[RMDB]
RNA sequence: GGGAACGACUCGAGUAGAGUCGAAAAAAAGAAGAAAGCCCCGAAGGUCAAUUUUCAUUAACCAACGAGGCUGUCUCCAUACUGAACAUAUGCAGAUUAGCCUCUUACCCGUCGCAAGACAAGGAAAGUUUGUAUAUUCUUUCGAGAAUAUACAAACAAAAGAAACAACAACAACAAC
Reactivity to DMS in 0.01 (KOAc 150mM, MgCl2 10mM, bicine 150mM(pH8.5), 24C), signal-to-noise 2, nucleotides 027 to 126: a100a060a150g010a140a080g010a150a200a300g000c030c000c060c280g030a070a170g000g030u020c060a060a050u000u000u000u000c040a070u000u010a060a050c060c050a040a150c230g000a050g000g040c010u000g000u000c010u030c170c020a020u000a010c030u010g000a070a130c260a300u000a020u030g000c300a040g000a040u010u010a000g000c000c020u000c000u010u000a060c030c040c100g020u000c010g010c190a070a090g010a030c040a090a040g000g000a120a060a050
Reactivity to 2A3 in 0.01 (KOAc 150mM, MgCl2 10mM, bicine 150mM(pH8.5), 24C), signal-to-noise 4, nucleotides 027 to 126: a000a000a000g100a030a000g020a050a020a010g050c020c020c060c070g160a070a020g020g010u030c020a050a100u010u080u060u150c060a080u060u110a050a030c030c030a050a060c080g000a000g000g010c000u000g010u020c000u060c030c010a000u010a020c050u160g100a140a020c020a050u050a000u020g000c020a000g010a010u200u180a040g020c000c000u020c000u000u050a050c000c020c010g020u010c000g020c070a050a050g010a050c020a020a010g060g010a070a120a010